Conditions: 150 mM KOAc, 10 mM MgCl2 and 150 mM bicine (pH 8.5), 24 C. The record gives the reactivity of an RNA of 177 nucleotides to 2A3 and DMS. DMS adducts were read by reverse transcription with MarathonRT. The DMS profile rests on 45,752 reads. DMS (dimethyl sulfate) methylates the pairing face of unpaired adenines and cytosines. The 2A3 profile rests on 36,948 reads. Values cover nucleotides 27 to 126.

RNA sequence: GGGAACGACUCGAGUAGAGUCGAAAACCACUCGGAUCAAGGGAUUCGUCAUCUGCUUUGCCUUGGGCAUCUUACUUUCCCUACUCGGCUCGGUCGCCCUAUUUCUGCACAGGGGCAUUGUGGUCUACAUUAAUAGCUAUUUCGAUAGCUAUUAAUGAAAAGAAACAACAACAACAAC
Reactivity to 2A3 in 0.01 (KOAc 150mM, MgCl2 10mM, bicine 150mM(pH8.5), 24C), signal-to-noise 9, nucleotides 027 to 126: c000c000a030c040u050c040g050g020a050u060c060a120a190g150g030g030a040u060u050c030g050u020c050a090u010c050u060g030c020u090u070u100g030c000c000u060u070g010g030g010c010a050u020c030u090u060a110c030u050u070u030c000c010c000u010a050c030u020c020g020g000c010u010c020g020g030u030c050g040c000c000c000u060a150u030u140u040c060u090g000c050a030c010a080g020g010g020g000c020a020u020u100g030u040g040g040u030c020u050a050
Reactivity to DMS in 0.01 (KOAc 150mM, MgCl2 10mM, bicine 150mM(pH8.5), 24C), signal-to-noise 9, nucleotides 027 to 126: c020c010a150c110u000c050g010g000a070u000c060a140a110g010g010g010a090u000u000c070g010u010c090a060u000c050u000g010c060u000u000u000g010c040c030u000u000g020g000g010c050a040u010c050u000u000a080c110u000u000u000c020c020c010u000a070c050u000c020g010g020c070u000c030g000g000u000c070g000c020c010c020u000a090u000u000u000c060u000g000c070a060c090a100g010g000g000g010c080a060u000u000g020u000g000g010u000c050u000a150